Chemical mapping of a 177-nucleotide RNA with 2A3 and DMS. As a SHAPE reagent, 2A3 marks flexible, mostly unpaired nucleotides at the ribose 2'-OH. Reactivities are given for positions 27 through 126.

RNA sequence: GGGAACGACUCGAGUAGAGUCGAAAAGCGAGCCUCCGGUCGAAGACGGCGUCCCGGCGUUCACGUAGACUCUCAGGCCGAGGUCUCGCGCCGUCCGGAGGAGCUCCUCCAGCGCCCGGUAGGACCGACGCACACCUAAUUUCGAUUAGGUGUGCGUAAAAGAAACAACAACAACAAC
Reactivity to 2A3 in 0.01 (KOAc 150mM, MgCl2 10mM, bicine 150mM(pH8.5), 24C), signal-to-noise 2, nucleotides 027 to 126: g050c050g030a010g020c010c000u000c020c020g040g000u030c020g170a110a040g030a020c030g010g010c010g060u120c020c030c030g010g040c030g070u140u190c120a080c180g050u070a060g050a080c020u050c020u040c220a070g060g120c030c010g000a090g030g020u000c040u020c070g000c000g000c030c000g000u040c020c020g020g010a020g030g010a070g060c040u060c000c000u000c000c000a040g020c000g000c010c020c000g010g000u110a020g010g030a030c000c010g010
Reactivity to DMS in 0.01 (KOAc 150mM, MgCl2 10mM, bicine 150mM(pH8.5), 24C), signal-to-noise 3, nucleotides 027 to 126: g030c100g010a130g000c010c000u000c010c000g010g020u000c030g000a210a130g000a030c030g010g010c020g000u000c030c050c030g000g010c060g000u000u030c170a090c110g010u010a040g010a070c070u000c040u020c040a230g000g020c210c050g010a080g000g010u030c060u000c110g000c000g020c030c000g010u010c010c080g020g010a010g020g010a140g000c290u000c010c000u000c020c000a290g010c040g010c070c030c020g000g020u010a050g020g000a100c040c070g010